An RNA of 177 nucleotides, treated with 2A3 and DMS and read out base by base.
DMS (dimethyl sulfate) methylates the pairing face of unpaired adenines and cytosines.
For 2A3 the reverse transcriptase was SuperScript II with manganese.
Values are in units of 0.01, from 0 to 300, in steps of 10.

RNA sequence: GGGAACGACUCGAGUAGAGUCGAAAAGAUAUGGAUCCAUUUAGAGCAUGGGAGCCUCGGAAACGAGUGAUCCCAUGAACUACUCUAUAUGGAUCCUAAGUCAAACACGUGUCUUCGGACACGUGAAGUAGGAUACAUACUUCGGUAUGUAUCCUACAAAAGAAACAACAACAACAAC
Reactivity to 2A3 in 0.01 (KOAc 150mM, MgCl2 10mM, bicine 150mM(pH8.5), 24C), signal-to-noise 4, nucleotides 027 to 126: g030a010u060a030u170g000g000a000u010c000c000a000u010u040u030a010g010a000g000c020a000u000g030g070g010a110g220c000c000u000c010g030g040a100a080a060c020g000a000g020u090g030a060u000c000c000c000a000u000g010a000a000c000u190a040c010u020c000u000a020u010a000u040g000g000a000u000c000c000u000a010a000g000u010c010a070a060a010c000a000c010g000u000g000u000c010u040u090c300g110g000a010c000a000c020g000u000g000a010a010
Reactivity to DMS in 0.01 (KOAc 150mM, MgCl2 10mM, bicine 150mM(pH8.5), 24C), signal-to-noise 5, nucleotides 027 to 126: g000a050u000a300u000g010g010a010u000c000c000a010u000u000u000a010g000a000g000c010a010u000g000g000g000a010g000c030c010u000c000g000g000a120a100a170c010g010a000g010u010g020a050u000c000c000c000a000u000g000a030a030c080u010a300c010u000c010u000a020u010a010u000g000g000a010u000c000c000u000a000a090g010u010c030a150a120a150c010a010c000g010u000g000u000c000u000u010c200g020g000a010c000a000c000g010u000g000a000a080